This 177-nucleotide RNA was probed chemically with 2A3 and DMS. It was measured as part of the RMDB library TTRDEL. For DMS, 3,191 sequencing reads were counted.
RNA sequence: GGGAACGACUCGAGUAGAGUCGAAAAGAUAUGGAAUAUAUUGAGCUCUGUGUCGGAAACGACACUGAGCAAUGAUGUAUGUUCCUAAGUCAAAACUCUUCCAAUAUCUUCGGAUAUUGGAAGAGAACUGCUUUAGUAUGUUCGCAUACUAAAGCAGAAAAGAAACAACAACAACAAC
Reactivity to 2A3 in 0.01 (KOAc 150mM, MgCl2 10mM, bicine 150mM(pH8.5), 24C), signal-to-noise 2, nucleotides 027 to 126: g000a000u010a010u040g000g000a020a010u000a000u000a000u050u010g010a010g010c000u000c020u030g020u000g010u000c000g000g000a020a000a000c000g000a000c010a010c010u010g000a000g000c010a010a160u010g010a000u000g000u010a000u000g010u000u000c000c000u000a020a000g010u010c010a010a010a050a300c010u010c000u000u000c010c000a000a010u000a000u000c030u060u120c300g160g000a010u000a010u000u000g000g010a000a010g000a000g000a000a010
Reactivity to DMS in 0.01 (KOAc 150mM, MgCl2 10mM, bicine 150mM(pH8.5), 24C), signal-to-noise 2, nucleotides 027 to 126: g000a020u000a050u020g000g000a010a000u000a000u000a000u000u000g000a020g010c010u010c000u000g010u000g000u000c000g020g020a010a010a010c000g010a030c010a020c010u000g000a010g020c000a190a100u030g020a080u000g010u000a000u000g000u000u000c010c010u000a010a090g010u000c010a090a080a100a170c010u000c000u000u000c000c000a000a010u010a010u000c010u000u010c230g010g010a000u010a000u010u000g000g000a010a000g010a000g010a020a080